Source information
The data come from the RNA Mapping Database (RMDB), library OK3TST. Structure probing data (2A3 and DMS) for a 207-nucleotide construct. Values are in units of 0.01, from 0 to 300, in steps of 10. 2A3 adducts were read by reverse transcription with SuperScript II with manganese.
RNA sequence: GGGAACGACUCGAGUAGAGUCGAAAACUCAUGGCCUCGGCAUUGUUGGCCUGCAUCUUUUUUAGGCCCUUCUUGUUGUGCUUCUUGGCAAGGUGCAUGCUCCUUAGGAACUUGAGGUCCACCCCAUUAAGACAUUUGUAUCUUUGUGAUCGGGGUACAUAUUUUAGUGGUUCGCCACUAAAAUAUGAAAAGAAACAACAACAACAAC
Reactivity to 2A3 in 0.01 (KOAc 150mM, MgCl2 10mM, bicine 150mM(pH8.5), 24C), signal-to-noise 4, nucleotides 027 to 156: c020u020c010a070u080g030g000c000c000u000c030g010g030c090a110u050u200g070u100u110g020g000c000c000u010g000c020a050u070c020u060u120u030u060u070u180a100g010g040c020c030c020u130u100c050u090u150g100u120u070g020u060g040c010u050u090c020u120u130g060g010c040a010a020g010g000u030g010c000a020u040g010c000u060c050c030u100u110a090g090g000a130a080c010u070u170g000a010g000g020u030c000c020a030c000c000c010c000a010u080u080a040a010g020a020c030a060u070u150u210g070u100a090u050c020u020u070u090g090u070g060a100u130c070g000g000g000g020u020a010
Reactivity to DMS in 0.01 (KOAc 150mM, MgCl2 10mM, bicine 150mM(pH8.5), 24C), signal-to-noise 2, nucleotides 027 to 156: c030u000c040a090u000g010g030c020c010u000c020g040g020c060a120u010u000g040u010u010g000g020c050c060u000g020c040a070u010c010u010u000u010u000u000u010a160g020g020c010c010c050u000u000c050u010u000g020u000u000g030u000g010c020u000u000c020u000u010g020g010c050a060a040g010g010u000g000c010a060u000g000c040u000c070c030u000u000a140g040g010a070a060c040u000u000g020a030g000g020u010c030c050a060c020c000c010c010a090u000u010a030a040g020a040c040a130u010u000u000g040u010a050u000c020u000u000u000g040u010g000a080u040c100g000g000g050g030u000a140

2A3 is a SHAPE reagent: it acylates the 2'-hydroxyl of flexible nucleotides of all four kinds.